Structure probing data (DMS and 2A3) for a 177-nucleotide construct. For DMS, 1,301 sequencing reads were counted. The data come from the RNA Mapping Database (RMDB), library OK2TRN. 2A3 is a SHAPE reagent: it acylates the 2'-hydroxyl of flexible nucleotides of all four kinds. The RNA was probed in 150 mM KOAc, 10 mM MgCl2 and 150 mM bicine (pH 8.5) at 24 C.
[RMDB]
RNA sequence: GGGAACGACUCGAGUAGAGUCGAAAACGACCGUUGAGGCGGACGGUUCGCACGUCGUGAAGAUGCUCGGUAGCGAUGGGGAGUGGCGCGAGCUGGGCACGAUCGUUCCGGGGUCGCUGAAGUACACGCACUGUCCAAAGUUCGCUUUGGACAGUGCAAAAGAAACAACAACAACAAC
Reactivity to DMS in 0.01 (KOAc 150mM, MgCl2 10mM, bicine 150mM(pH8.5), 24C), signal-to-noise 1, nucleotides 027 to 126: c190g000a030c030c020g020u010u000g010a230g000g000c020g000g000a040c020g000g000u000u000c060g010c240a070c070g020u000c020g060u010g000a100a080g000a240u010g010c020u000c020g030g010u000a130g000c000g000a060u000g000g010g000g000a130g040u000g000g010c060g010c070g020a060g020c020u000g000g010g010c020a050c000g000a040u000c030g020u010u000c020c000g000g000g000g000u000c010g040c070u000g000a060a110g010u000a050c150a120c190
Reactivity to 2A3 in 0.01 (KOAc 150mM, MgCl2 10mM, bicine 150mM(pH8.5), 24C), signal-to-noise 1, nucleotides 027 to 126: c040g010a030c010c020g040u030u080g100a090g090g030c010g000g010a000c010g000g000u040u090c050g010c020a050c020g040u030c000g020u020g060a060a010g050a060u120g040c010u000c010g080g050u080a080g040c040g040a070u100g010g040g060g000a140g050u110g050g040c050g010c000g030a000g020c010u040g000g040g040c020a010c040g000a040u110c060g000u010u030c040c040g000g000g010g060u110c020g000c020u050g040a050a010g060u060a030c060a010c100